[RMDB]
RNA sequence: GGGAACGACUCGAGUAGAGUCGAAAAUUCAAUCCACUUUUCGGAAGCCUCCCUUUUGACAUCGUCAGGGUCAUCAGCGCACACAGGCUUUAUCUGCGUGUGAAAUAUCGGUCGGCAGCUGUGGCGGCCCGAAAUUUCCUUUCGAGGAAAUUUCGGGAAAAGAAACAACAACAACAAC
Reactivity to 2A3 in 0.01 (KOAc 150mM, MgCl2 10mM, bicine 150mM(pH8.5), 24C), signal-to-noise 4, nucleotides 027 to 126: u170u070c020a010a090u040c000c000a060c030u110u080u100u130c060g030g030a040a040g080c000c010u000c030c000c000u050u040u020u060g010a020c030a080u030c090g080u060c070a070g070g030g010u010c020a040u040c030a020g040c030g000c020a000c010a020c020a070g080g000c000u070u120u170a180u110c010u040g010c010g030u020g010u010g070a040a070a000u280a040u060c080g060g040u010c030g010g030c000a030g000c040u030g000u010g100g000c000g010g000
Reactivity to DMS in 0.01 (KOAc 150mM, MgCl2 10mM, bicine 150mM(pH8.5), 24C), signal-to-noise 1, nucleotides 027 to 126: u000u020c090a040a040u010c030c010a150c090u010u030u010u020c030g000g010a080a130g000c020c010u000c040c010c030u000u030u020u020g000a080c020a030u000c050g000u030c130a050g000g020g000u000c040a070u010c080a080g040c070g010c010a010c020a020c020a020g000g010c150u020u030u030a020u030c020u060g000c080g000u030g000u000g000a020a060a040u000a040u010c040g000g000u000c030g010g000c050a000g010c040u020g000u000g000g000c030g000g000
The record gives the reactivity of an RNA of 177 nucleotides to 2A3 and DMS.
The reactions ran in a buffer of 150 mM KOAc, 10 mM MgCl2 and 150 mM bicine (pH 8.5), at 24 C.
For 2A3, 2,050 sequencing reads were counted.
The DMS profile rests on 2,428 reads.
Values are in units of 0.01, from 0 to 300, in steps of 10.